[RMDB]
RNA sequence: GGGAACGACUCGAGUAGAGUCGAAAAGAAAGAAAGAAAGAAGAAAAAGAGGGGUUGUAGGGGAUGAAAUCCCCUGCCCGCACUGAGGAAGGUGCUCAGGCUGCAAAACAGCCGUCGAAGGAAACAAGUGUUGUUACGUUUUCGAACGUAACAACACAAAAGAAACAACAACAACAAC
Reactivity to 2A3 in 0.01 (KOAc 150mM, MgCl2 10mM, bicine 150mM(pH8.5), 24C), signal-to-noise 2, nucleotides 027 to 126: g040a030a020a000g060a040a060a010g100a030a090a010g040a060a000g060a000a090a020a010a000g050a070g000g060g000g000u080u060g180u240a030g000g000g030g000a020u160g210a020a210a020u000c000c000c000c000u000g000c010c010c010g000c000a030c110u180g020a000g090g040a120a000g000g000u050g010c030u060c000a010g000g000c000u020g020c070a020a090a020a090c010a000g010c010c000g060u010c020g010a120a120g080g080a150a080a030c180a260a080
Reactivity to DMS in 0.01 (KOAc 150mM, MgCl2 10mM, bicine 150mM(pH8.5), 24C), signal-to-noise 2, nucleotides 027 to 126: g000a000a050a080g000a100a020a060g000a060a010a040g000a130a000g000a050a030a060a030a010g000a040g000g000g000g010u000u010g000u000a020g000g000g000g020a010u010g000a040a050a300u020c000c040c000c020u010g000c040c000c110g040c060a050c000u000g000a090g000g000a090a030g030g020u040g000c070u010c100a140g000g000c000u000g000c070a020a080a120a270c090a010g010c000c000g020u000c130g020a050a060g010g000a070a080a050c140a040a050
Conditions: 150 mM KOAc, 10 mM MgCl2 and 150 mM bicine (pH 8.5), 24 C. Chemical mapping of a 177-nucleotide RNA with 2A3 and DMS. Reactivities are given for positions 27 through 126. For DMS the reverse transcriptase was MarathonRT. For DMS, 1,600 sequencing reads were counted. 2A3 adducts were read by reverse transcription with SuperScript II with manganese. Source: RMDB library RFM100, as collected in RNAgym.